[RMDB]
RNA sequence: GGGAACGACUCGAGUAGAGUCGAAAAACGGACUACGGUCCGAAGGGUUCGGGGUACUAGUGUGAAUGCCCGGCUAGUACCCUGUGCUAGUGGUUUACCUACUGAUGUUCAAUUAAGGGCAUUUGAAAAAAGACUCCUAACUUCGGUUAGGAGUCAACUUGCGUAUUUUGUUCGCAAAAUACGCAAGAAAAGAAACAACAACAACAAC
Reactivity to 2A3 in 0.01 (KOAc 150mM, MgCl2 10mM, bicine 150mM(pH8.5), 24C), signal-to-noise 1, nucleotides 027 to 156: a000c010g010g020a000c000u020a020c140g130g020u020c000c070g000a050a020g080g060g030u070u170c080g000g000g000g000u010a000c000u000a020g000u010g000u030g220a050a000u000g000c000c000c000g000g030c000u000a000g000u000a000c020c000c000u020g090u070g000c010u030a030g060u020g110g020u170u160u130a110c000c000u000a050c020u020g120a130u160g100u270u290c120a120a090u260u210a210a290g000g000g000c000a010u040u020u090g000a060a000a000a000a000a000g010a000c000u000c000c000u000a020a020c020u000u040c240g030g000u000u000a000g000g000a000g000u000c000a000a000